[RMDB]
RNA sequence: GGGAACGACUCGAGUAGAGUCGAAAAGAUAUGGAAAGCUCAUGUUACAGCAAUGAUGACCUCGGAAACGAGCAAGUUGCACAUGAGGCUUUCCUAAGUCAAAGUACGAUACUUCGGUAUCGUACAACGCAUUCUACGUCUUCGGACGUAGAAUGCGAAAAGAAACAACAACAACAAC
Reactivity to 2A3 in 0.01 (KOAc 150mM, MgCl2 10mM, bicine 150mM(pH8.5), 24C), signal-to-noise 1, nucleotides 027 to 126: g020a010u040a010u170g010g030a040a000a000g030c000u000c040a040u020g000u090u200a300c160a040g030c010a020a010u000g180a260u160g000a070c020c000u040c040g000g040a060a060a030c000g030a000g010c000a040a100g000u010u010g000c020a000c000a030u000g030a050g050g000c000u000u020u010c000c000u000a050a010g000u030c060a220a000a000g010u010a020c010g000a020u000a010c010u050u070c300g110g000u010a000u000c000g000u000a010c000a010a000
Reactivity to DMS in 0.01 (KOAc 150mM, MgCl2 10mM, bicine 150mM(pH8.5), 24C), signal-to-noise 1, nucleotides 027 to 126: g010a030u000a300u000g000g000a020a000a010g070c030u000c000a000u000g000u000u010a090c300a140g020c000a030a030u000g010a090u000g010a120c300c000u000c010g030g020a170a060a160c000g030a030g000c020a030a060g040u000u000g010c020a100c010a000u000g020a000g030g000c000u000u000u010c000c000u020a030a050g000u000c050a120a120a150g010u000a010c000g010a060u000a000c000u000u000c220g030g020u000a000u000c000g000u000a000c030a070a090
An RNA of 177 nucleotides, treated with 2A3 and DMS and read out base by base. The DMS profile rests on 710 reads. The reactions ran in a buffer of 150 mM KOAc, 10 mM MgCl2 and 150 mM bicine (pH 8.5), at 24 C. For 2A3, 1,390 sequencing reads were counted.